Chemical mapping of a 177-nucleotide RNA with DMS and 2A3.
2A3 adducts were read by reverse transcription with SuperScript II with manganese.
For DMS the reverse transcriptase was MarathonRT.
RNA sequence: GGGAACGACUCGAGUAGAGUCGAAAAUCGUCGGUCUCCGGUUUUCCGACCCGUCCCCCGUCGGAAACCGGAUGGUAGCGGUAGUCUCAUUCCCCUCUCCGGGCUGCCGCUGUGUAGUGACAUGGCCGUCUAAUGAGACCUUCGGGUCUCAUUAGACAAAAGAAACAACAACAACAAC
Reactivity to DMS in 0.01 (KOAc 150mM, MgCl2 10mM, bicine 150mM(pH8.5), 24C), signal-to-noise 3, nucleotides 027 to 126: u020c120g010u000c010g030g020u010c010u000c010c000g000g000u000u010u000u000c010c000g010a000c030c100c110g000u000c030c000c000c020c260g000u000c000g000g010a000a000a010c010c000g000g000a020u040g000g000u000a010g000c000g000g000u010a010g020u000c010u020c120a300u030u000c010c010c000c090u030c040u020c130c120g000g000g010c010u000g000c000c000g040c000u010g020u010g000u000a060g030u040g010a120c060a090u010g020g020c050c030
Reactivity to 2A3 in 0.01 (KOAc 150mM, MgCl2 10mM, bicine 150mM(pH8.5), 24C), signal-to-noise 3, nucleotides 027 to 126: u140c030g030u010c020g010g030u000c020u000c020c000g010g030u010u020u130u040c010c000g000a000c010c010c040g140u080c000c000c000c000c010g000u000c000g000g000a000a000a000c000c000g010g000a040u040g050g040u050a000g000c000g000g030u010a010g020u000c030u000c090a090u080u080c010c000c000c000u030c010u020c050c050g010g000g000c000u000g000c000c010g000c000u000g010u010g020u040a170g040u080g060a030c030a090u060g040g000c030c020